The record gives the reactivity of an RNA of 177 nucleotides to DMS and 2A3.
2A3 adducts were read by reverse transcription with SuperScript II with manganese.

RNA sequence: GGGAACGACUCGAGUAGAGUCGAAAAGAAGUGUCCGAUGCGACACGAAAGAGCCGUGGAGGAAGGCUCCUCUCACCAAUAAAAGCAUCGUCAGAUCGAUAUAAACCUGAUCAGGGAAUAAAGAAAAGGGUAUUCUAAUCUUCGGAUUAGAAUACCCAAAAGAAACAACAACAACAAC
Reactivity to DMS in 0.01 (KOAc 150mM, MgCl2 10mM, bicine 150mM(pH8.5), 24C), signal-to-noise 1, nucleotides 027 to 126: g000a180a260g000u020g010u000c020c020g000a050u000g020c060g000a000c010a000c030g010a030a210a120g030a000g000c030c010g040u000g000g000a070g000g000a060a130g000g000c020u000c000c100u000c000u000c000a290c080c110a090a080u000a130a060a050a060g010c010a060u000c070g020u010c020a000g000a060u000c020g000a110u010a110u000a060a110a200c150c130u000g000a060u040c150a070g000g000g000a140a030u030a060a060a120g020a000a180a100a100
Reactivity to 2A3 in 0.01 (KOAc 150mM, MgCl2 10mM, bicine 150mM(pH8.5), 24C), signal-to-noise 4, nucleotides 027 to 126: g120a070a040g000u000g000u010c040c010g000a030u070g010c080g010a000c030a000c030g010a020a050a000g040a000g010c040c040g010u110g080g130a150g060g060a100a070g030g000c000u010c020c000u030c000u010c020a210c090c040a070a030u180a150a160a010a000g010c020a030u000c010g040u020c000a040g000a150u030c050g040a010u010a020u070a090a120a070c000c030u090g020a120u100c100a090g110g020g000a050a060u230a150a060a100g160a080a140a000a030